[RMDB]
RNA sequence: GGGAACGACUCGAGUAGAGUCGAAAAGAAAAGACGAUGUUAUUAUGAUUCUCGAGUAAUAGCAGGUCAUGCGUACUACUCGCCGAACGGAAGGCCGACUGUUCGCGAAAUGAAACGAGGAAGAAAAGCCAUGAUACUACUUCGGUAGUAUCAUGGCAAAAGAAACAACAACAACAAC
Reactivity to DMS in 0.01 (KOAc 150mM, MgCl2 10mM, bicine 150mM(pH8.5), 24C), signal-to-noise 2, nucleotides 027 to 126: g000a120a140a150a040g000a050c060g010a070u000g010u010u000a030u020u000a000u030g010a150u020u020c100u000c000g000a210g000u000a010a050u000a000g070c000a000g000g010u000c030a060u040g010c000g040u000a090c110u000a100c020u010c000g030c070c040g000a000a000c050g010g000a110a080g000g010c090c020g000a080c010u000g040u000u000c060g000c040g000a000a050a060u020g000a100a170a000c020g010a070g000g000a140a090g040a090a030a110a140
Reactivity to 2A3 in 0.01 (KOAc 150mM, MgCl2 10mM, bicine 150mM(pH8.5), 24C), signal-to-noise 3, nucleotides 027 to 126: g130a000a060a000a000g010a020c030g020a140u050g020u040u050a030u050u020a040u090g090a180u220u030c090u100c060g030a010g000u060a000a000u010a020g000c010a010g010g050u040c050a090u220g020c010g020u030a030c000u000a040c030u040c030g030c020c030g020a100a030c020g090g000a100a050g090g080c000c030g030a010c020u000g050u000u060c010g000c030g030a040a050a070u230g050a130a020a010c030g000a030g080g020a030a100g110a010a080a030a000
An RNA of 177 nucleotides, treated with DMS and 2A3 and read out base by base. DMS adducts were read by reverse transcription with MarathonRT. The DMS profile rests on 2,061 reads. 2A3 adducts were read by reverse transcription with SuperScript II with manganese.